Structure probing data (2A3 and DMS) for a 177-nucleotide construct. It was measured as part of the RMDB library TTRDEL. The RNA was probed in 150 mM KOAc, 10 mM MgCl2 and 150 mM bicine (pH 8.5) at 24 C. For DMS, 39,292 sequencing reads were counted. Values are in units of 0.01, from 0 to 300, in steps of 10. 2A3 adducts were read by reverse transcription with SuperScript II with manganese. For 2A3, 48,180 sequencing reads were counted. Values cover nucleotides 27 to 126.
RNA sequence: GGGAACGACUCGAGUAGAGUCGAAAAGAUAUGGAUGGAGCGUGUUAGGCUUCCCACAUCGGAAACGAUGUGCAGCCUUACACGCGAUGAAAUCCUAAGUCAAAACACAGCGCUUCGGCGCUGUGAACAAUGGAGAUAAGUUCGCUUAUCUCCAUUGAAAAGAAACAACAACAACAAC
Reactivity to 2A3 in 0.01 (KOAc 150mM, MgCl2 10mM, bicine 150mM(pH8.5), 24C), signal-to-noise 6, nucleotides 027 to 126: g030a010u080a030u160g010g000a010u010g000g020a020g010c010g000u010g000u020u050a010g000g000c000u050u030c020c010c000a000c000a000u010c010g020g020a090a050a030c010g000a000u000g010u010g000c030a000g000c000c000u000u000a000c010a000c000g000c010g000a010u000g000a000a010a000u000c000c000u030a160a040g070u050c040a000a000a190a110c010a000c000a000g000c010g010c010u090u200c300g110g000c000g000c010u010g000u000g000a000a000
Reactivity to DMS in 0.01 (KOAc 150mM, MgCl2 10mM, bicine 150mM(pH8.5), 24C), signal-to-noise 9, nucleotides 027 to 126: g010a040u000a300u010g000g000a010u000g000g000a070g020c000g020u000g010u000u000a010g010g010c000u000u010c140c210c000a020c000a000u000c000g000g000a120a090a180c000g010a010u000g000u000g050c160a020g000c000c000u000u000a010c000a000c000g010c000g000a020u010g000a110a100a020u000c000c000u010a050a130g010u000c030a100a070a120a220c010a000c000a010g010c000g020c000u000u010c200g030g010c000g010c000u000g000u000g000a050a110